[RMDB]
RNA sequence: GGGAACGACUCGAGUAGAGUCGAAAAGCUCGGAGACGAGCAAGGCUGACAAAACGGUGUCCCAACCUCCACGUGGUGUCGGCUGGAUAAUGCUGCAUUAUGUUGCAUUUAUCAACUGGGAAACAAAAUGCAUUAUACCGUUCGCGGUAUAAUGCAUAAAAGAAACAACAACAACAAC
Reactivity to 2A3 in 0.01 (KOAc 150mM, MgCl2 10mM, bicine 150mM(pH8.5), 24C), signal-to-noise 1, nucleotides 027 to 126: g000c000u000c010g030g030a080g010a080c010g000a000g000c010a010a030g030g000c000u000g000a000c020a020a050a090a050c110g000g090u060g030u040c020c000c000a020a060c020c010u080c050c030a090c090g100u100g000g000u010g030u000c000g000g020c020u030g030g000a010u010a050a010u020g000c010u010g000c010a090u120u100a140u300g020u010u020g000c000a020u040u050u140a040u000c010a000a080c040u080g000g030g000a070a100a040c050a020a070a030
Reactivity to DMS in 0.01 (KOAc 150mM, MgCl2 10mM, bicine 150mM(pH8.5), 24C), signal-to-noise 2, nucleotides 027 to 126: g030c000u010c000g020g000a200g000a230c000g010a010g020c020a160a040g000g000c000u000g000a000c000a020a030a010a060c040g000g000u020g010u010c010c010c040a070a190c090c090u030c060c070a100c030g010u000g000g040u010g000u000c020g000g000c000u010g030g000a020u000a000a030u000g010c000u010g010c000a220u010u020a040u030g020u000u000g000c030a010u010u010u040a030u000c010a100a050c190u070g000g000g000a080a030a080c100a090a040a090

The record gives the reactivity of an RNA of 177 nucleotides to 2A3 and DMS. DMS adducts were read by reverse transcription with MarathonRT. It was measured as part of the RMDB library OK1LIB. Values are in units of 0.01, from 0 to 300, in steps of 10. DMS (dimethyl sulfate) methylates the pairing face of unpaired adenines and cytosines.